[RMDB]
RNA sequence: GGGAACGACUCGAGUAGAGUCGAAAAAUCAAUACGAUGAACAAGAGUAUGAUCACGAACACGACCACGCAGCACACGACGAGCAAAAAGUCUCUGAUGAACGAUCGAUUCCGCGACACCAACUGUUCCAAUUGAUCCUGAUUAAGCACCGACGACGUGAUCCGGUGUAGUUCGCUACACCGGAUCAAAAAGAAACAACAACAACAAC
Reactivity to 2A3 in 0.01 (KOAc 150mM, MgCl2 10mM, bicine 150mM(pH8.5), 24C), signal-to-noise 1, nucleotides 027 to 156: a000u010c030a010a010u050a110c120g080a100u090g050a130a050c050a200a050g020a000g060u240a060u200g050a050u100c010a000c180g040a040a010c180a000c090g050a050c020c030a000c060g050c040a080g030c000a010c000a000c120g150a010c090g040a000g000c050a000a090a110a000a000g000u030c000u000c000u060g040a090u050g000a060a030c000g060a040u160c060g080a040u080u030c180c040g020c000g000a010c000a040c060c010a030a030c000u030g150u070u050c000c140a140a100u060u040g000a040u030c050c000u060g000a130u130u090a200a000g000c000a000c060c050g030a090c010g000a000c110g050
This 207-nucleotide RNA was probed chemically with 2A3. The RNA was probed in 150 mM KOAc, 10 mM MgCl2 and 150 mM bicine (pH 8.5) at 24 C. It was measured as part of the RMDB library OK3TST. For 2A3 the reverse transcriptase was SuperScript II with manganese.